[RMDB]
This 177-nucleotide RNA was probed chemically with DMS and 2A3.
Conditions: 150 mM KOAc, 10 mM MgCl2 and 150 mM bicine (pH 8.5), 24 C.
Source: RMDB library OK2TRN, as collected in RNAgym.
The 2A3 profile rests on 961 reads.
Reactivities are rounded to 0.1 and cut off at 0 and 3.
RNA sequence: GGGAACGACUCGAGUAGAGUCGAAAAGGAGGCCCACGUCGUGGCCUGCCUGUAUGCUGGGAUCGACUUCGCCGGCACCAAUGCCGAGGUAAUGCCCGCGCAGUGGGAGUUCCAAAUUGGUCCAGCCGGAGUCGUAGUACUUCGGUACUACGACUCCAAAAGAAACAACAACAACAAC
Reactivity to DMS in 0.01 (KOAc 150mM, MgCl2 10mM, bicine 150mM(pH8.5), 24C), signal-to-noise 1, nucleotides 027 to 126: g020g010a060g000g010c000c000c010a100c270g010u010c240g010u010g000g030c010c020u000g010c000c010u000g040u000a090u000g010c020u020g000g010g000a100u000c070g000a060c090u000u000c070g030c070c060g000g050c080a060c040c050a040a090u000g020c060c030g000a000g010g010u000a100a090u000g020c030c000c100g030c130g000c050a070g000u000g010g000g000a140g010u010u000c020c030a020a060a130u000u000g000g000u000c040c040a050g030c100c190
Reactivity to 2A3 in 0.01 (KOAc 150mM, MgCl2 10mM, bicine 150mM(pH8.5), 24C), signal-to-noise 1, nucleotides 027 to 126: g000g000a000g010g000c020c060c010a000c030g300u250c080g060u090g000g000c000c010u040g220c000c000u090g040u050a060u120g040c030u020g030g000g030a070u070c050g050a030c040u050u010c050g090c080c030g040g000c020a020c050c010a020a050u080g070c040c040g050a090g000g000u110a200a060u120g070c010c010c020g020c040g030c010a050g000u050g000g010g030a110g090u100u000c000c020a100a060a020u160u130g040g000u100c010c000a020g040c070c140